[RMDB]
RNA sequence: GGGAACGACUCGAGUAGAGUCGAAAAGUUGCCGACGAACCUUCCAACCUUCCAAACGUCGUUUUCGACAAGCUUCCAACCUUCCAAUCUACUCGAGAGGAGGAGGAGGAGGAGGAGGAGGAAUUAAAUCCACUUGUCAAUUCGUUGACAAGUGGAUAAAAGAAACAACAACAACAAC
Reactivity to DMS in 0.01 (KOAc 150mM, MgCl2 10mM, bicine 150mM(pH8.5), 24C), signal-to-noise 2, nucleotides 027 to 126: g000u010u040g000c060c080g000a130c170g000a130a120c070c030u000u010c000c040a160a150c010c020u000u000c010c010a020a070a260c270g000u000c000g010u000u010u000u000c050g050a070c050a050a120g000c050u030u000c030c020a050a080c120c000u040u000c020c090a080a210u000c010u000a060c090u000c030g010a000g000a150g000g040a080g000g000a220g030g000a080g000g030a130g000g000a120g010g050a230g000g000a150g000g000a300a080u010u010a050a060
Reactivity to 2A3 in 0.01 (KOAc 150mM, MgCl2 10mM, bicine 150mM(pH8.5), 24C), signal-to-noise 1, nucleotides 027 to 126: g070u080u100g110c040c010g010a060c010g060a040a070c000c000u080u020c030c040a090a110c060c020u090u000c010c010a060a050a070c070g000u000c000g020u060u010u040u130c040g000a030c020a030a000g010c030u140u090c010c040a090a070c080c010u080u050c020c010a000a060u060c000u040a050c020u020c060g010a020g000a030g070g050a020g040g040a050g020g020a030g030g010a090g000g030a040g000g030a040g010g030a010g020g000a020a060u160u140a090a140

This 177-nucleotide RNA was probed chemically with DMS and 2A3. For DMS, 983 sequencing reads were counted. Source: RMDB library M2PK90, as collected in RNAgym. For DMS the reverse transcriptase was MarathonRT.